[RMDB]
RNA sequence: GGGAACGACUCGAGUAGAGUCGAAAACAUCAGGAGGACCUUCCGCGCACUUCCAAGCAGGAGCUUUCCUUCCAAGCGCACUUCCAAUCUACUCGAGAGCAGGAGGAGGAGGAGGAUUCCCACAAAACUUUAAAUAAGGCUUCGGCCUUAUUUAAAGAAAAGAAACAACAACAACAAC
Reactivity to 2A3 in 0.01 (KOAc 150mM, MgCl2 10mM, bicine 150mM(pH8.5), 24C), signal-to-noise 2, nucleotides 027 to 126: c010a060u140c060a040g040g000a000g020g000a040c000c010u050u040c030c000g020c000g020c070a070c080u220u070c070c030a040a040g020c020a030g010g030a010g020c010u090u160u140c010c010u090u040c020c000a080a000g070c010g000c060a030c030u040u030c020c010a070a070u000c000u020a020c020u010c010g040a040g000a030g060c020a010g000g070a020g000g020a050g010g020a030g010g000a020g000g020a110u030u030c020c040c000a030c040a010a090a020a010
Reactivity to DMS in 0.01 (KOAc 150mM, MgCl2 10mM, bicine 150mM(pH8.5), 24C), signal-to-noise 3, nucleotides 027 to 126: c090a090u000c120a110g040g010a060g000g010a110c300c030u010u000c030c050g020c050g020c060a070c050u010u000c090c090a060a150g020c070a130g010g000a070g000c130u000u000u010c010c020u010u010c020c050a130a160g030c120g000c070a050c060u000u000c020c040a200a120u000c010u000a030c000u000c000g000a030g000a120g010c090a060g010g010a080g000g000a060g000g000a050g000g000a050g000g010a130u020u000c000c000c020a090c240a090a050a070a090

Annotation:
This 177-nucleotide RNA was probed chemically with 2A3 and DMS. For DMS, 2,132 sequencing reads were counted. For 2A3 the reverse transcriptase was SuperScript II with manganese. For 2A3, 2,898 sequencing reads were counted.